[RMDB]
Structure probing data (2A3 and DMS) for a 177-nucleotide construct. For DMS, 11,161 sequencing reads were counted.
RNA sequence: GGGAACGACUCGAGUAGAGUCGAAAAGAUAUGGAUUAUGGGAGUCGGCGAUCGGAAACGAUCGGCCGACGAAGAACAUAGUGUCCUAAGUCAAAGCUAGUAACCAAGUUCGCUUGGUUACUAGCAAGGAGAUUAAUAAGUUCGCUUAUUAAUCUCCAAAAGAAACAACAACAACAAC
Reactivity to 2A3 in 0.01 (KOAc 150mM, MgCl2 10mM, bicine 150mM(pH8.5), 24C), signal-to-noise 3, nucleotides 027 to 126: g010a000u070a020u110g000g000a010u090u030a020u070g000g020g020a070g020u000c010g000g010c010g000a000u020c000g010g040a040a040a050c030g010a000u010c040g080g140c040c020g000a010c010g010a000a000g000a010a010c010a000u020a030g190u130g070u190c000c020u030a100a010g030u030c080a170a000a010g000c000u000a000g010u000a000a000c000c000a000a020g000u030u080c180g020c200u010u000g000g000u000u010a000c000u000a000g000c000a000a000
Reactivity to DMS in 0.01 (KOAc 150mM, MgCl2 10mM, bicine 150mM(pH8.5), 24C), signal-to-noise 6, nucleotides 027 to 126: g010a040u000a170u010g000g010a030u000u000a010u000g000g000g000a150g010u010c000g010g020c000g000a010u000c010g010g000a070a060a130c010g010a010u000c000g010g020c000c000g010a000c000g000a030a080g000a130a200c020a010u000a020g010u010g010u000c010c000u000a040a160g000u000c050a070a100a180g010c000u000a000g000u000a000a000c000c000a010a010g000u000u010c260g020c010u000u000g000g000u010u000a000c000u000a000g000c010a020a020

The reactions ran in a buffer of 150 mM KOAc, 10 mM MgCl2 and 150 mM bicine (pH 8.5), at 24 C. Values cover nucleotides 27 to 126.